[RMDB]
RNA sequence: GGGAACGACUCGAGUAGAGUCGAAAAAAAAGAGGGUUACAUGCCCGGGACGGUGUCCCACAACCACAUGAUGCCCUACUUUUUGGCGGGCUCCGGAUGGCCUGUCGAGAUUACAUUUCACGCGGCCACGUCCGUAUUGGUUCGCCAAUACGGACGUAAAAGAAACAACAACAACAAC
Reactivity to 2A3 in 0.01 (KOAc 150mM, MgCl2 10mM, bicine 150mM(pH8.5), 24C), signal-to-noise 2, nucleotides 027 to 126: a000a020a000a010g070a010g000g010g010u060u200a010c000a000u030g080c040c080c000g060g000g010a050c130g190g150u150g020u110c000c010c010a030c050a010a070c050c010a020c010a070u060g030a060u090g000c020c010c000u200a300c040u110u100u010u060u050g020g040c030g010g080g020c020u070c060c020g170g070a110u060g020g040c010c000u080g100u200c070g000a030g010a050u110u180a110c080a180u070u140u000c080a050c040g040c060g010g000c000c010
Reactivity to DMS in 0.01 (KOAc 150mM, MgCl2 10mM, bicine 150mM(pH8.5), 24C), signal-to-noise 1, nucleotides 027 to 126: a020a040a020a060g000a040g000g000g000u000u000a240c070a050u000g010c120c120c250g020g000g000a040c020g000g020u010g050u000c030c010c000a110c140a050a060c130c220a110c000a040u000g010a230u000g020c000c000c010u000a050c030u000u000u000u010u000g000g020c040g010g000g000c130u000c110c080g010g010a040u000g000g000c000c020u000g000u010c000g030a080g010a040u000u000a120c170a200u020u000u000c030a050c050g030c130g020g000c060c010